Structure probing data (2A3 and DMS) for a 177-nucleotide construct. Conditions: 150 mM KOAc, 10 mM MgCl2 and 150 mM bicine (pH 8.5), 24 C. Source: RMDB library M2PK50, as collected in RNAgym. For DMS, 1,197 sequencing reads were counted. Reactivities are given for positions 27 through 126.
RNA sequence: GGGAACGACUCGAGUAGAGUCGAAAAAUCCUGCCCUUCGGGGCAGGAUGCAGCUUCGCUCUUGAGAGCGCGACUUAAGAGGAAUCCCAACCCGCAGAAGCACUAUUUCUCAGUUCGCUGAGAAAAAAGCAUACCAUCAUUUCGAUGAUGGUAUGCUAAAAGAAACAACAACAACAAC
Reactivity to 2A3 in 0.01 (KOAc 150mM, MgCl2 10mM, bicine 150mM(pH8.5), 24C), signal-to-noise 2, nucleotides 027 to 126: a000u000c000c000u010g030c000c000c010u000u040c240g030g000g000g000c010a000g000g020a010u010g000c010a010g000c020u040u020c030g000c020u030c000u090u100g070a080g000a040g080c060g030c050g080a080c010u010u020a050a000g010a000g060g010a030a070u000c020c010c000a010a100c080c060c030g060c060a050g000a090a010g060c010a010c040u100a140u090u060u000c000u000c010a040g020u060u090c150g060c100u010g010a000g000a040a010a010a010a000
Reactivity to DMS in 0.01 (KOAc 150mM, MgCl2 10mM, bicine 150mM(pH8.5), 24C), signal-to-noise 2, nucleotides 027 to 126: a020u000c010c000u000g000c000c000c010u000u020c180g040g000g030g010c000a000g000g000a000u020g010c150a080g000c070u000u000c000g010c000u000c000u000u000g010a030g020a150g000c020g020c100g000a100c010u000u000a020a020g000a020g020g010a110a090u000c020c000c020a160a160c140c050c040g030c060a030g000a030a040g010c030a170c170u000a170u000u000u000c000u000c000a010g010u010u020c240g000c020u010g000a010g000a000a000a030a090a050